[RMDB]
RNA sequence: GGGAACGACUCGAGUAGAGUCGAAAAGAUAUGGAGCGAUAAACAGCGAAGGGCCUUGGUUCGGAAACGAACCAAAGGCUGUUGACGCUGUAUCGCUCCUAAGUCAAAACAUCGCUUCGGCGAUGAACCAUAUCUAGUCGUUCGCGACUAGAUAUGGAAAAGAAACAACAACAACAAC
Reactivity to 2A3 in 0.01 (KOAc 150mM, MgCl2 10mM, bicine 150mM(pH8.5), 24C), signal-to-noise 4, nucleotides 027 to 126: g000a000u020a000u070g000g000a000g020c010g010a000u050a060a300a060c010a000g020c050g130a170a130g300g000g000c010c000u000u000g000g020u010u000c000g000g010a000a030a000c000g000a000a010c000c000a010a020a030g010g000c010u000g020u060u250g070a060c040g000c010u000g000u000a000u000c000g000c000u000c000c010u000a000a000g000u000c000a000a000a070a110c010a010u010c020g000c000u090u070c220g160g000c020g000a000u000g020a020a020
Reactivity to DMS in 0.01 (KOAc 150mM, MgCl2 10mM, bicine 150mM(pH8.5), 24C), signal-to-noise 5, nucleotides 027 to 126: g000a030u000a140u010g000g000a020g040c010g020a010u000a080a150a300c010a020g020c000g030a280a140g020g020g010c000c000u010u000g000g010u000u000c010g020g000a030a030a060c000g010a010a000c010c000a000a010a060g020g020c020u000g010u010u010g010a300c050g010c000u010g020u000a010u000c000g000c000u010c000c000u000a000a050g000u000c020a100a080a110a240c010a010u000c000g010c000u000u010c220g040g000c000g010a000u000g000a060a210